Chemical mapping of a 177-nucleotide RNA with DMS and 2A3. It was measured as part of the RMDB library M2PK50. 2A3 adducts were read by reverse transcription with SuperScript II with manganese. For DMS, 2,626 sequencing reads were counted.
RNA sequence: GGGAACGACUCGAGUAGAGUCGAAAAGGAUGCUCGUUCGCGAGCAUCCACUGAGAUAGCCACUAUAAAGAUUAAGUCUUCCUAGUCGAGACAGGAUGUCUAUGCUCCUGGCCUUCGGGCCAGGAAAACAUCGGUAGUAGUUCGCUACUACCGAUGUAAAAGAAACAACAACAACAAC
Reactivity to DMS in 0.01 (KOAc 150mM, MgCl2 10mM, bicine 150mM(pH8.5), 24C), signal-to-noise 3, nucleotides 027 to 126: g000g020a010u010g000c000u010c000g010u020u010c200g020c000g020a010g020c000a010u010c010c020a040c120u000g000a130g000a050u000a060g020c040c020a030c040u000a140u010a060a080a080g000a100u010u020a070a100g010u000c020u010u010c030c000u000a050g000u000c070g010a090g010a040c070a080g010g010a080u010g010u010c020u010a070u010g000c100u000c010c000u000g000g000c000c010u000u020c170g020g020g030c010c000a020g010g020a010a020a060
Reactivity to 2A3 in 0.01 (KOAc 150mM, MgCl2 10mM, bicine 150mM(pH8.5), 24C), signal-to-noise 3, nucleotides 027 to 126: g010g000a020u010g000c020u000c010g040u050u060c190g010c020g090a000g000c000a000u020c000c010a010c000u030g010a010g020a040u080a050g070c020c010a040c030u060a050u130a270a150a040g060a040u130u160a160a010g040u000c030u040u020c030c010u050a080g070u140c080g050a020g010a040c010a040g190g050a050u110g030u020c030u060a090u090g090c030u020c000c010u000g000g010c000c000u060u050c230g040g000g000c000c030a000g000g000a000a000a000

The 2A3 profile rests on 2,991 reads.